[RMDB]
RNA sequence: GGGAACGACUCGAGUAGAGUCGAAAAACCGCGGGGAGGUGGAGAUGCCAUGCCGACCCGAAGAGGAAAGGAAGGACACAGACGCGAACCGUGAGUGGAACCCUCGAUCCUUUAUUGGGGGGUACACAGACCUCCGUCUUCGGACGGAGGAAAAGAAACAACAACAACAAC
Reactivity to DMS in 0.01 (KOAc 150mM, MgCl2 10mM, bicine 150mM(pH8.5), 24C), signal-to-noise 5, nucleotides 027 to 129: a170c000c070g030c070g040g020g040g000a110g030g030u040g030g020a090g030a090u040g000c100c000a140u040g000c100c040g040a180c100c040c050g000a050a070g030a040g000g000a080a110a070g030g020a050a030g000g030a080c140a100c150a110g020a000c070g040c050g020a000a010c000c050g050u010g010a100g000u070g000g000a090a140c040c000c030u030c020g050a080u040c290c120u060u120u080a070u060u050g000g000g000g000g000g000u040a070c080a020c020a080g000a090
Reactivity to 2A3 in 0.01 (KOAc 150mM, MgCl2 10mM, bicine 150mM(pH8.5), 24C), signal-to-noise 4, nucleotides 027 to 129: a010c020c010g010c020g010g000g010g000a020g000g010u050g010g020a130g020a040u100g090c040c000a080u150g040c000c010g020a060c050c000c000g010a030a010g030a000g050g010a050a030a040g040g010a010a020g000g000a020c010a010c000a050g060a020c030g030c010g040a040a020c010c010g080u070g020a010g010u050g000g020a090a030c020c020c010u030c010g030a040u150c020c210u100u200u140a100u080u060g000g000g000g000g000g010u080a000c010a000c000a000g130a070